[RMDB]
RNA sequence: GGGAACGACUCGAGUAGAGUCGAAAAAUUGUACGCUCUUUUCAGGUUGCUGCAUGUCGAGUCGGGAGGGACUUCUACGGAAAUGACCAAUGACGAAUGCCUGUCGACGUACAACACUCUCGGCAUCGAGGUCCAUGACGUUCGCGUCAUGGACCUCAAAAGAAACAACAACAACAAC
Reactivity to 2A3 in 0.01 (KOAc 150mM, MgCl2 10mM, bicine 150mM(pH8.5), 24C), signal-to-noise 1, nucleotides 027 to 126: a000u110u000g080u020a020c020g010c130u000c000u050u220u020u060c000a000g000g000u020u000g120c040u050g010c000a000u120g040u130c040g000a060g170u080c100g000g060g000a000g000g080g010a130c110u020u000c000u020a150c080g010g020a030a030a030u130g040a130c030c040a030a030u070g000a000c160g060a120a020u210g000c000c000u000g000u000c010g020a000c000g020u000a010c020a010a100c020a000c000u020c000u000c030g070g120c060a140u090c100